[RMDB]
RNA sequence: GGGAACGACUCGAGUAGAGUCGAAAAAUAAGCGUAAACGGAUAUUGUGAUGGCAAGCCAGAAGCGGUGGCAAUCUGAAGGCUGGUUGAAGCCGAAUCGAUAGCAACAGAUAGCGUUGUCUUUGCAGCUGUCGAACUGUAAUAGCGUGAUGGUGAUGCCAUUUAAUCAUGUUCGCAUGAUUAAAUGGAAAAGAAACAACAACAACAAC
Reactivity to DMS in 0.01 (KOAc 150mM, MgCl2 10mM, bicine 150mM(pH8.5), 24C), signal-to-noise 4, nucleotides 027 to 156: a110u000a070a100g020c050g030u000a050a110a120c060g000g030a110u010a050u000u000g030u000g000a130u000g020g010c020a090a140g010c040c040a110g020a100a120g000c050g000g040u010g010g040c050a060a080u000c050u000g010a160a100g010g040c000u000g020g030u010u010g010a100a110g020c010c010g020a060a110u000c070g010a070u000a070g010c010a100a070c050a090g010a110u000a090g020c090g010u000u000g010u000c060u000u000u000g020c030a130g000c020u000g020u010c040g010a050a090c030u000g010u010a040a080u000a060g020c050g020u010g000a070u000g010g030u000g000a180u000g010
Reactivity to 2A3 in 0.01 (KOAc 150mM, MgCl2 10mM, bicine 150mM(pH8.5), 24C), signal-to-noise 7, nucleotides 027 to 156: a000u120a020a010g040c030g070u040a040a040a050c070g030g020a040u060a040u160u110g030u030g030a090u050g050g010c050a040a040g010c020c020a060g030a110a010g020c030g020g030u010g020g000c020a020a060u040c040u060g080a060a020g050g000c010u040g050g050u050u110g040a030a010g000c020c010g020a010a030u030c020g020a020u040a050g010c020a000a050c020a060g060a070u090a030g050c060g070u060u090g030u030c020u050u030u090g030c040a020g010c000u050g030u050c020g010a030a030c020u020g020u090a040a060u030a110g040c060g030u030g040a050u060g020g040u030g020a030u090g030
Chemical mapping of a 207-nucleotide RNA with DMS and 2A3. The reactions ran in a buffer of 150 mM KOAc, 10 mM MgCl2 and 150 mM bicine (pH 8.5), at 24 C. 2A3 is a SHAPE reagent: it acylates the 2'-hydroxyl of flexible nucleotides of all four kinds. For DMS the reverse transcriptase was MarathonRT. The data come from the RNA Mapping Database (RMDB), library OK3TST. The DMS profile rests on 12,200 reads. For 2A3 the reverse transcriptase was SuperScript II with manganese.